[RMDB]
RNA sequence: GGGAACGACUCGAGUAGAGUCGAAAAAGUAAGUGUGAGGGACAUUGAAUAUGAUAAACGUCUCUGGGAGAGUCAUAGGGUUUAUUAACAUAUUAGAGGCUAUGACAAGUCCUGCAAAAGAAACCUAUUUAUCUCCUCAUAGAAGUAAUCACUAUUACCGACUAGUACUAUUCGUAGUACUAGUCGGAAAAGAAACAACAACAACAAC
Reactivity to 2A3 in 0.01 (KOAc 150mM, MgCl2 10mM, bicine 150mM(pH8.5), 24C), signal-to-noise 2, nucleotides 027 to 156: a000g080u110a070a020g000u060g050u030g080a130g010g040g040a010c040a050u120u150g080a180a060u270a160u210g050a100u090a060a160a020c010g030u000c010u000c010u060g000g040g000a040g010a050g020u040c010a020u030a020g030g020g020u020u050u050a060u060u090a160a000c040a060u200a040u090u120a080g000a030g110g010c040u070a050u110g040a090c010a060a010g010u060c000c000u010g070c060a070a070a000a000g040a010a010a010c000c000u000a050u010u040u020a040u030c020u000c000c010u030c010a010u030a070g110a110a030g020u090a030a030u050c030a010c070u090a080u180u100a030
Reactivity to DMS in 0.01 (KOAc 150mM, MgCl2 10mM, bicine 150mM(pH8.5), 24C), signal-to-noise 1, nucleotides 027 to 156: a140g000u010a050a090g010u010g010u000g000a030g050g000g030a130c020a090u000u010g020a130a170u020a100u010g010a160u030a090a100a080c010g000u000c020u000c020u010g020g000g000a080g010a260g000u000c240a030u000a030g020g030g000u000u000u010a060u040u000a120a190c110a130u000a140u000u010a130g000a120g010g000c050u000a090u010g000a000c080a000a110g030u000c020c010u030g000c140a080a030a130a300g000a040a050a030c040c020u000a090u000u000u000a160u000c030u000c020c000u000c040a050u010a060g020a080a060g010u000a080a050u000c030a050c030u020a100u000u000a120